Description
Source: RMDB library OK1LIB, as collected in RNAgym. An RNA of 177 nucleotides, treated with 2A3 and DMS and read out base by base.
[RMDB]
RNA sequence: GGGAACGACUCGAGUAGAGUCGAAAAUGGAAUAUGAUGAGCAGGGUGUAGUAACAUGCGAUGAUUGGAGAAGAGUAGCUGUCAGCUCUGAGUCUGUUGUUUAUUCCGACAUGGCGAAACUCAGAACUCCUUAGGGAGAUUUCGAUCUCCCUAAGGAAAAAGAAACAACAACAACAAC
Reactivity to 2A3 in 0.01 (KOAc 150mM, MgCl2 10mM, bicine 150mM(pH8.5), 24C), signal-to-noise 3, nucleotides 027 to 126: u190g040g050a080a020u080a070u120g110a040u060g010a050g010c050a000g030g040g020u100g040u020a070g000u010a030a110c020a040u130g080c050g030a010u080g040a030u080u180g100g050a090g030a130a010g030a010g050u030a010g000c010u040g050u110c020a020g020c000u000c000u030g020a010g020u050c020u070g050u070u030g030u020u050u040a070u140u000c030c010g000a040c090a100u110g000g000c100g030a060a000a000c010u000c030a020g000a090a020c050
Reactivity to DMS in 0.01 (KOAc 150mM, MgCl2 10mM, bicine 150mM(pH8.5), 24C), signal-to-noise 6, nucleotides 027 to 126: u020g020g020a080a040u020a040u010g010a090u020g010a080g020c040a030g000g000g000u010g010u020a070g020u020a060a080c110a060u020g010c080g000a080u020g010a090u000u020g010g010a100g000a090a050g000a060g030u010a060g010c040u000g000u010c030a090g010c030u000c020u000g000a090g000u000c070u010g010u000u010g000u000u010u010a080u030u010c040c000g000a080c120a040u020g010g000c090g010a080a080a040c060u010c030a060g010a090a120c160

For 2A3, 1,893 sequencing reads were counted. High 2A3 reactivity points to a flexible backbone, as in loops and unpaired stretches.